[RMDB]
RNA sequence: GGGAACGACUCGAGUAGAGUCGAAAACAGAAGGGGAGAGCGUUAUAACGGGACCAUUAUUGACACUGAUUCCACAUGCCUACGAGUUCGGACGAGUAUCUUUGAUUGCGGGGCAGUCUCGAGAUCAGAUGCCAUGAUGAUUCGUCAUCAUGGCAUCAAAAGAAACAACAACAACAAC
Reactivity to 2A3 in 0.01 (KOAc 150mM, MgCl2 10mM, bicine 150mM(pH8.5), 24C), signal-to-noise 2, nucleotides 027 to 126: c010a010g040a070a060g020g000g030g020a050g000a000g000c020g000u100u040a090u030a190a040c040g000g010g020a030c040c040a070u120u090a050u080u140g060a010c010a010c060u030g020a110u040u010c020c010a040c030a090u060g010c000c000u060a060c020g000a000g040u050u030c020g030g010a030c020g030a030g030u070a050u080c030u060u050u040g060a100u000u070g040c020g010g010g030g060c000a020g090u020c000u040c030g060a050g010a050u040c080a010
Reactivity to DMS in 0.01 (KOAc 150mM, MgCl2 10mM, bicine 150mM(pH8.5), 24C), signal-to-noise 3, nucleotides 027 to 126: c090a120g000a140a090g030g000g040g000a050g000a030g000c070g030u010u000a100u000a100a090c100g000g000g020a050c070c030a090u010u010a070u000u020g020a080c080a070c070u020g000a070u010u000c020c050a070c090a090u000g000c040c000u020a080c080g000a070g030u010u010c100g000g010a030c070g020a080g000u000a040u000c030u000u010u000g010a110u000u000g010c070g010g000g010g000c050a060g000u000c010u000c040g000a080g000a060u000c120a110